[RMDB]
RNA sequence: GGGAACGACUCGAGUAGAGUCGAAAAUUCAAGCGAUUCGUCGCUUGAACCUGAGGAGACUCAAGCAAAAUUGUUCCCUUAUGCUUUUGCUUUCCUCUUUUAAGUAGUAGUGCUUCGGCACUACUAAUUCUAACUUAGAAUUCGUUCUAAGUUAGAAAAAAGAAACAACAACAACAAC
Reactivity to 2A3 in 0.01 (KOAc 150mM, MgCl2 10mM, bicine 150mM(pH8.5), 24C), signal-to-noise 4, nucleotides 027 to 126: u020u000c000a000a000g010c000g020a000u040u100c200g050u010c000g150c000u000u000g000a010a010c000c020u020g010a010g000g000a020g000a010c000u010c030a010a010g000c010a000a030a140a300u290u300g000u020u000c010c000c000u000u040a040u010g000c000u010u000u040u020g030c050u020u020u020c000c010u030c060u080u070u040u100a110a030g010u020a010g010u000a000g000u000g000c000u020u060c260g090g000c010a000c000u000a000c000u000a000a000
Reactivity to DMS in 0.01 (KOAc 150mM, MgCl2 10mM, bicine 150mM(pH8.5), 24C), signal-to-noise 6, nucleotides 027 to 126: u010u000c010a010a000g010c000g000a010u000u010c200g020u000c000g010c000u000u000g000a010a060c030c020u000g010a010g010g000a030g000a020c000u000c040a010a010g010c000a020a030a170a090u010u020g000u000u000c000c000c000u000u000a190u000g000c010u000u000u000u000g010c140u000u000u000c000c000u000c000u000u010u000u010a090a170g000u000a000g000u000a010g010u000g010c000u000u020c210g030g010c000a010c000u000a000c000u000a010a050